RNA sequence: GGGAACGACUCGAGUAGAGUCGAAAACUGCGAAGAUCUCACGCUUCCAGGAGGUCGUCAUGCACCCCGUGGCUGACGGCAACACGAUAUGGGAGGUUGUGCACCCAGACCCGAAGAUUCGGUUUGACUCAUUCUACAAUUUCGAUUGUAGAAUGAGAAAAGAAACAACAACAACAAC
Reactivity to 2A3 in 0.01 (KOAc 150mM, MgCl2 10mM, bicine 150mM(pH8.5), 24C), signal-to-noise 8, nucleotides 027 to 126: c020u020g020c100g050a040a010g020a070u040c060u050c160a060c160g050c000u020u000c010c000a010g010g060a050g040g070u010c000g000u010c010a030u300g000c010a100c020c080c020c040g130u230g050g000c000u010g000a010c000g010g010c010a040a030c080a020c060g110a090u040a090u240g030g010g000a040g050g000u070u090g030u060g030c030a040c020c000c000a010g050a080c020c010c020g040a070a030g060a200u110u090c060g010g070u040u050u120g030a040
Reactivity to DMS in 0.01 (KOAc 150mM, MgCl2 10mM, bicine 150mM(pH8.5), 24C), signal-to-noise 9, nucleotides 027 to 126: c070u000g000c150g010a070a060g000a060u010c110u010c120a080c150g010c020u000u000c020c020a060g000g010a140g020g020u000c020g010u000c020a030u010g020c020a070c070c070c060c090g020u010g000g010c010u000g000a040c020g010g000c010a090a060c110a080c100g010a110u010a090u000g010g000g010a090g000g020u000u000g010u010g000c110a110c020c010c010a100g000a120c100c010c020g010a060a120g010a140u000u000c050g010g000u000u000u000g010a290